[RMDB]
RNA sequence: GGGAACGACUCGAGUAGAGUCGAAAACACAUUGUGAAUGCAUCAAUGCUUGUAAAAUGUAGAUAGCAAUACGACCGGUAUAUGCGAAUACACGUACGUUUACGCGGUUCUGUAACGAGUGUAAAAACUUAUGCACCUAUUUCGAUAGGUGCAUAAGAAAAGAAACAACAACAACAAC
Reactivity to DMS in 0.01 (KOAc 150mM, MgCl2 10mM, bicine 150mM(pH8.5), 24C), signal-to-noise 6, nucleotides 027 to 126: c080a090c060a050u010u000g010u000g010a170a130u010g020c070a050u010c040a060a050u000g000c080u010u010g000u000a050a050a080a060u000g010u000a050g010a110u000a230g010c060a030a040u000a030c060g010a120c120c100g030g020u000a030u000a070u000g010c020g000a090a120u000a030c050a040c080g000u000a070c090g010u010u000u000a030c050g010c090g010g000u000u000c110u020g000u010a040a060c040g010a100g020u000g010u000a030a050a090a070a100
Reactivity to 2A3 in 0.01 (KOAc 150mM, MgCl2 10mM, bicine 150mM(pH8.5), 24C), signal-to-noise 6, nucleotides 027 to 126: c050a010c020a070u090u060g040u030g130a180a070u140g020c020a030u040c020a050a100u060g020c040u070u060g070u130a060a110a040a050u100g030u050a040g040a270u090a020g010c020a030a030u020a040c060g140a160c100c040g070g020u020a120u010a020u090g020c030g040a060a010u080a060c050a000c050g070u150a030c030g020u060u060u040a060c090g000c040g100g070u150u080c050u100g040u010a050a030c040g020a040g040u040g010u060a070a080a010a020a010
Source: RMDB library OK2TRN, as collected in RNAgym.
This 177-nucleotide RNA was probed chemically with DMS and 2A3.
The reactions ran in a buffer of 150 mM KOAc, 10 mM MgCl2 and 150 mM bicine (pH 8.5), at 24 C.
In probing experiments dimethyl sulfate is read out at A N1 and C N3, which are open when not base-paired.
For DMS, 7,400 sequencing reads were counted.
For 2A3 the reverse transcriptase was SuperScript II with manganese.